[RMDB]
RNA sequence: GGGAACGACUCGAGUAGAGUCGAAAACCAACCUUAACCUUGGUUCCUUAAGGCCGGUUCCAAGGAAGGCCUUAAGGAACCAAGGAACCGGUUGGAAGGCCUUAAGGAAUUAAUUAAGGUUCCUUGGCCUCGAAGAUUGAUUCGUCAAUCUUCGAGGAAAAGAAACAACAACAACAAC
Reactivity to DMS in 0.01 (KOAc 150mM, MgCl2 10mM, bicine 150mM(pH8.5), 24C), signal-to-noise 1, nucleotides 027 to 126: c000c000a030a030c000c000u010u000a100a260c020c000u000u000g020g010u000u000c000c000u000u000a000a020g000g000c000c010g020g020u010u020c100c140a060a160g000g000a070a160g010g020c000c010u020u000a010a000g010g020a030a010c020c000a000a010g010g030a000a020c300c300g000g000u000u010g000g010a060a050g000g000c010c000u010u010a030a000g020g020a070a020u000u000a030a130u010u000a120a060g000g000u000u000c000c000u000u000g010g000